[RMDB]
RNA sequence: GGGAACGACUCGAGUAGAGUCGAAAACAGUCGCGAAGCGUAAAACCGUCAUGUGCGGUGACGAGAUUAAUCGCGGCACUCGGCAGACGACCAUUACGUUGAAAAACAUCGCUGGAGGCAGCAAAAACAUCAUACCGGAUUUCGAUCCGGUAUGAUGAAAAGAAACAACAACAACAAC
Reactivity to 2A3 in 0.01 (KOAc 150mM, MgCl2 10mM, bicine 150mM(pH8.5), 24C), signal-to-noise 2, nucleotides 027 to 126: c020a020g020u020c000g000c020g060a070a000g040c010g020u080a090a100a050a040c010c010g030u030c040a200u190g130u180g120c000g110g000u020g020a000c030g010a000g020a120u120u200a120a090u080c020g000c000g000g000c000a040c020u050c000g030g000c010a010g000a150c040g050a040c020c010a050u080u090a060c030g030u040u070g040a080a030a000a010a020c010a090u100c080g010c010u030g000g060a030g010g050c020a020g000c010a060a000a000a000a040
Reactivity to DMS in 0.01 (KOAc 150mM, MgCl2 10mM, bicine 150mM(pH8.5), 24C), signal-to-noise 4, nucleotides 027 to 126: c110a120g020u010c050g020c050g020a080a080g020c040g000u000a050a040a210a100c100c000g010u000c020a040u010g010u010g030c080g000g020u000g010a020c020g000a090g020a150u000u000a110a060u000c030g020c000g000g010c020a050c030u020c040g000g000c030a060g000a060c030g010a080c080c080a140u010u000a100c060g030u010u000g000a070a070a090a060a060c090a110u000c120g010c010u000g000g010a090g000g000c030a060g000c090a090a070a040a070a180